[RMDB]
RNA sequence: GGGAACGACUCGAGUAGAGUCGAAAAGAGUUUCUGUUCGCAGAAACUCAGUGCCUAGCUGCGUUAAAAUAAUAGCUACGCUUAAUAAAUUUUUUUAACGCAAAAGUGGUUAUUUCGAUAACCACAACACAGGAAAGGAAUUCGUUCCUUUCCUGUGAAAAGAAACAACAACAACAAC
Reactivity to DMS in 0.01 (KOAc 150mM, MgCl2 10mM, bicine 150mM(pH8.5), 24C), signal-to-noise 2, nucleotides 027 to 126: g010a000g000u000u010u010c000u000g000u010u010c150g040c000a010g000a000a020a000c000u000c000a020g000u000g010c010c010u000a080g020c230u000g000c010g000u000u000a000a000a020a000u000a050a050u010a080g000c040u010a100c230g010c070u010u000a040a140u010a050a110a020u000u000u000u000u000u000u010a000a000c000g010c000a050a030a080a110g020u000g010g000u000u000a000u000u010u020c220g000a050u000a010a000c000c010a010c000a110a170
Reactivity to 2A3 in 0.01 (KOAc 150mM, MgCl2 10mM, bicine 150mM(pH8.5), 24C), signal-to-noise 2, nucleotides 027 to 126: g010a010g000u000u000u030c000u000g020u050u050c210g010c080a000g000a000a000a000c000u000c000a000g060u060g020c010c000u010a060g050c150u080g010c000g020u000u000a010a000a010a000u060a040a080u040a050g040c080u100a080c150g020c030u100u060a100a030u110a190a300a110u050u020u000u010u000u000u000a010a000c010g000c000a020a000a040a150g000u010g020g000u000u000a020u010u150u050c130g080a020u010a010a020c000c000a000c010a000a030
Chemical mapping of a 177-nucleotide RNA with DMS and 2A3. Reactivities are given for positions 27 through 126. The RNA was probed in 150 mM KOAc, 10 mM MgCl2 and 150 mM bicine (pH 8.5) at 24 C.